Chemical mapping of a 207-nucleotide RNA with DMS and 2A3. Source: RMDB library OK3TST, as collected in RNAgym.
RNA sequence: GGGAACGACUCGAGUAGAGUCGAAAACGCGAUGGAUACGUCCAUCGCGAAUACGUCCUAGCCGCGGACGUUAAACUGUGGCACGGUUGUGCCUAGGUGCAACCCUGCUACUAAUGGCGGUACCCCUGCCCAAGCUACCGUCUACGGACGGUAGCAAUACUAUUAGCUGAUUCGUCAGCUAAUAGUAAAAAGAAACAACAACAACAAC
Reactivity to DMS in 0.01 (KOAc 150mM, MgCl2 10mM, bicine 150mM(pH8.5), 24C), signal-to-noise 1, nucleotides 027 to 156: c030g010c000g000a040u000g010g020a080u000a040c300g010u000c000c010a020u000c070g040c000g000a020a020u000a140c020g040u000c030c000u020a070g000c010c020g010c170g000g000a020c010g040u000u000a020a060a090c070u000g000u010g010g000c000a010c060g000g020u000u020g010u000g020c020c020u000a110g090g040u000g010c010a010a030c010c010c030u000g010c020u000a070c010u000a080a120u000g020g010c010g040g000u000a100c030c000c040c080u000g000c030c030c040a140a140g000c010u010a010c000c000g000u000c000u000a090c300g050g010a010c020g020g030u010a000g020c000a040a030
Reactivity to 2A3 in 0.01 (KOAc 150mM, MgCl2 10mM, bicine 150mM(pH8.5), 24C), signal-to-noise 2, nucleotides 027 to 156: c000g000c000g000a010u000g000g000a010u040a070c190g120u020c000c000a000u010c000g000c000g000a000a000u090a010c000g020u010c000c010u010a060g010c010c000g000c010g000g000a010c010g020u000u030a050a040a030c130u090g000u000g010g000c000a000c000g000g010u000u000g000u010g030c030c050u120a230g010g100u020g000c000a000a000c000c000c000u010g020c000u000a000c010u030a080a200u170g090g000c000g020g000u120a110c010c010c000c030u040g050c020c040c020a040a020g010c000u000a000c000c000g020u010c020u010a040c270g110g000a000c000g000g000u000a000g000c000a010a000
For DMS the reverse transcriptase was MarathonRT.